Chemical mapping of a 177-nucleotide RNA with DMS and 2A3.

RNA sequence: GGGAACGACUCGAGUAGAGUCGAAAAGAUAUGGAUAGCGAUGAAAUGCACUACGAAGAACUCGGAAACGAGGGAGUAGGCAUGGAGCUAUCCUAAGUCAAAACGUUAGCUCUUCGGAGCUAACGAACAAUUGUAAUUCGUUCGCGAAUUACAAUUGAAAAGAAACAACAACAACAAC
Reactivity to DMS in 0.01 (KOAc 150mM, MgCl2 10mM, bicine 150mM(pH8.5), 24C), signal-to-noise 7, nucleotides 027 to 126: g010a050u000a300u010g000g000a010u000a000g010c010g010a120u010g010a100a100a010u000g000c000a170c010u010a010c010g020a110a120g000a100a200c010u000c010g000g000a130a090a190c010g000a010g000g000g000a070g020u000a000g000g000c000a000u000g000g000a050g000c000u000a000u000c000c000u000a010a050g010u000c040a080a050a070a170c020g010u000u000a000g010c000u000c000u010u010c230g020g010a000g010c000u000a000a000c000g000a030a090
Reactivity to 2A3 in 0.01 (KOAc 150mM, MgCl2 10mM, bicine 150mM(pH8.5), 24C), signal-to-noise 7, nucleotides 027 to 126: g020a020u080a030u130g000g010a000u010a000g030c050g260a300u030g040a070a050a000u020g000c140a240c300u020a000c010g250a300a100g030a080a020c010u010c000g010g040a040a060a060c010g000a000g010g000g010a030g000u000a010g000g000c000a000u010g000g010a010g000c000u000a000u000c000c000u000a040a000g050u010c040a010a020a100a130c010g000u000u000a000g000c000u010c000u030u080c300g120g000a000g000c000u000a000a000c000g000a010a000
The 2A3 profile rests on 19,882 reads. The reactions ran in a buffer of 150 mM KOAc, 10 mM MgCl2 and 150 mM bicine (pH 8.5), at 24 C. 2A3 adducts were read by reverse transcription with SuperScript II with manganese.